About this RNA:
An RNA of 177 nucleotides, treated with 2A3 and DMS and read out base by base.
RNA sequence: GGGAACGACUCGAGUAGAGUCGAAAACUUACCUGGCUUCCCUGAAGGAAAGGUAAAUCAGGAAAUGGAUGUGGUGAAUCUGGUGCGUACUGCUUCUGCACAGAUGUCCGGGCUUGAUAAGGCCCCGACACCUAUUACAAUUCGUUGUAAUAGGUGUAAAAGAAACAACAACAACAAC
Reactivity to 2A3 in 0.01 (KOAc 150mM, MgCl2 10mM, bicine 150mM(pH8.5), 24C), signal-to-noise 9, nucleotides 027 to 126: c010u050u070a060c000c000u000g040g000c020u040u010c040c010c000u020g120a190a110g130g060a220a120a010g050g010u040a020a020a040u050c020a010g040g030a030a090a100u150g080g030a060u070g070u100g080g070u100g080a050a050u030c020u060g100g030u060g060c030g030u040a070c060u090g130c020u100u050c040u110g010c030a010c000a040g040a030u040g050u010c020c030g000g010g000c020u050u030g040a060u190a210a060g030g010c010c000c000c000g010
Reactivity to DMS in 0.01 (KOAc 150mM, MgCl2 10mM, bicine 150mM(pH8.5), 24C), signal-to-noise 9, nucleotides 027 to 126: c070u000u000a060c020c010u000g010g010c040u000u000c050c020c020u000g010a100a110g010g010a110a110a060g000g010u000a030a060a080u000c040a040g000g010a070a100a090u000g010g010a060u000g020u000g010g010u000g010a130a060u000c020u000g010g020u000g010c040g020u010a090c150u010g010c110u010u000c050u000g020c040a050c050a050g010a050u000g010u000c030c090g010g000g000c020u000u000g010a090u010a080a100g010g000c040c000c000c140g010
The data come from the RNA Mapping Database (RMDB), library OK2TST. Conditions: 150 mM KOAc, 10 mM MgCl2 and 150 mM bicine (pH 8.5), 24 C.